[RMDB]
RNA sequence: GGGAACGACUCGAGUAGAGUCGAAAAGAUAUGGAGCAGAACUACUCGUGAAGACUCGUUGAAAAAACGCCUCUUUCGGAAACGAAAGAGGCGUUUUGGAGAGUUGGAGGCGAGCUGCUCCUAAGUCGUUAUUACUGGAGUUCGCUCCAGUAAUAACAAAAGAAACAACAACAACAAC
Reactivity to DMS in 0.01 (KOAc 150mM, MgCl2 10mM, bicine 150mM(pH8.5), 24C), signal-to-noise 2, nucleotides 027 to 126: g000a110u010a300u000g000g010a000g020c000a010g010a120a040c080u020a300c000u000c020g020u000g010a300a250g010a010c010u020c000g020u000u020g000a000a080a010a000a000a020c000g020c000c000u000c000u000u000u020c000g010g000a150a050a190c020g030a010a020a020g000a010g000g010c000g000u000u000u000u000g000g000a090g000a030g000u000u000g010g020a290g000g000c000g000a020g000c020u000g010c010u010c000c000u010a000a090g010u000c080
This 177-nucleotide RNA was probed chemically with DMS. Reactivities are given for positions 27 through 126.